[RMDB]
RNA sequence: GGGAACGACUCGAGUAGAGUCGAAAAAUAGGCUUAUCAAGUGAGGUGGAGGGACUGGCCCGAUGAAACCCGGCAGCCAGAAAUGGUGACAAUUCCUGCAGCGGAAACGUUGAAAGAUGAGCCGAUGCGCGACGCCACUUCGGUGGCGUCAAAAGAAACAACAACAACAAC
Reactivity to 2A3 in 0.01 (KOAc 150mM, MgCl2 10mM, bicine 150mM(pH8.5), 24C), signal-to-noise 2, nucleotides 027 to 129: a000u130a020g000g000c000u010u010a000u000c040a200a000g000u000g140a060g120g020u000g010g020a050g000g000g030a010c000u000g020g000c020c000c000g090a110u080g050a030a050a030c000c000c000g010g010c130a010g000c000c000a030g000a020a020a020u020g000g000u050g010a000c060a010a010u100u040c000c020u030g060c010a020g040c000g000g000a080a000a050c070g000u000u010g050a070a090a000g020a000u000g020a000g030c000c000g000a020u090g020c020g000c040
Reactivity to DMS in 0.01 (KOAc 150mM, MgCl2 10mM, bicine 150mM(pH8.5), 24C), signal-to-noise 4, nucleotides 027 to 129: a000u040a000g010g020c020u040u010a040u050c020a110a120g000u150g020a060g040g020u040g010g030a040g010g040g120a230c120u040g070g040c080c000c020g040a070u060g000a090a040a100c210c050c000g030g040c160a130g020c050c010a050g000a070a090a040u070g050g000u010g000a090c130a110a030u050u050c000c020u050g000c120a040g030c020g040g040a090a090a020c140g030u010u020g020a020a030a010g000a020u030g030a100g020c020c000g020a050u030g020c000g010c260

This 170-nucleotide RNA was probed chemically with 2A3 and DMS. Conditions: 150 mM KOAc, 10 mM MgCl2 and 150 mM bicine (pH 8.5), 24 C.